[RMDB]
RNA sequence: GGGAACGACUCGAGUAGAGUCGAAAAGUGUCGGACUCGCAAGUGCGAAUAUAUUUUAUCCCUAAACAGGGAGUGGAAAGCACGUCCUGGAGUGGAAAACACGUCCAUCCCAAAGCGAGUAAUGAAAGUACAGCACGGUAUUCGUACCGUGCUGUACAAAAGAAACAACAACAACAAC
Reactivity to 2A3 in 0.01 (KOAc 150mM, MgCl2 10mM, bicine 150mM(pH8.5), 24C), signal-to-noise 1, nucleotides 027 to 126: g130u130g040u040c040g020g010a010c000u010c000g010c070a100a090g020u010g020c000g070a180a030u090a000u000a030u070u140u080u140a030u000c000c000c000u070a220a290a000c080a060g000g020g000a010g010u050g040g080a090a030a010g000c020a020c000g070u080c000c010u000g000g000a020g000u030g020g050a130a110a050a030c020a020c040g090u020c000c000a040u030c000c000c000a000a010a010g000c010g010a020g000u010a040a100u150g050a080a050a020
Reactivity to DMS in 0.01 (KOAc 150mM, MgCl2 10mM, bicine 150mM(pH8.5), 24C), signal-to-noise 1, nucleotides 027 to 126: g010u010g010u000c040g020g020a080c010u000c000g030c010a220a110g010u000g010c000g020a100a060u010a130u000a130u010u010u000u020a050u030c000c000c000u000a100a120a100c160a030g000g010g000a030g000u000g000g000a150a030a190g000c010a020c000g010u010c090c040u000g000g020a100g010u000g000g020a110a090a200a080c150a060c100g020u000c000c010a060u000c010c000c000a060a090a100g010c020g000a030g000u000a050a060u030g000a140a070a070